[RMDB]
This 177-nucleotide RNA was probed chemically with 2A3 and DMS. The 2A3 profile rests on 6,323 reads. Source: RMDB library OK2TRN, as collected in RNAgym.
RNA sequence: GGGAACGACUCGAGUAGAGUCGAAAAAUGAACAGCAGAUUUAGGUUUUUGGAGAUCAUGCUGUAGAGGCAAUUAUCCUUUGCCCCUAAUUAUGGUGAUCUUUUGGUGGCUUAUUUAACAAAAUUGCCAUCGAAUACGUAUUCGUACGUAUUCGAUGAAAAGAAACAACAACAACAAC
Reactivity to 2A3 in 0.01 (KOAc 150mM, MgCl2 10mM, bicine 150mM(pH8.5), 24C), signal-to-noise 5, nucleotides 027 to 126: a000u140g020a050a030c020a020g050c010a010g030a100u070u060u110a070g090g070u050u050u050u220u250g060g020a040g010a000u000c020a050u090g050c010u000g010u000a010g010a000g010g000c010a010a020u080u040a130u300c040c010u010u020u030g020c000c000c000c000u010a050a070u200u110a090u140g050g000u010g030a010u030c000u010u020u050u070g070g020u060g000g010c010u090u030a060u070u160u090a110a040c060a030a070a070a140u100u070g000c010
Reactivity to DMS in 0.01 (KOAc 150mM, MgCl2 10mM, bicine 150mM(pH8.5), 24C), signal-to-noise 7, nucleotides 027 to 126: a070u000g000a110a070c070a070g010c040a070g010a070u020u000u000a070g010g010u000u000u000u010u010g010g010a040g000a010u000c020a040u000g000c010u000g010u000a020g010a030g010g010c010a020a010u010u000a130u010c210c160u010u000u000g000c010c010c010c010u000a030a080u000u010a060u010g000g020u000g000a040u010c010u000u000u000u000g020g010u000g010g000c030u010u000a060u010u010u010a080a090c180a050a040a060a100u000u010g010c130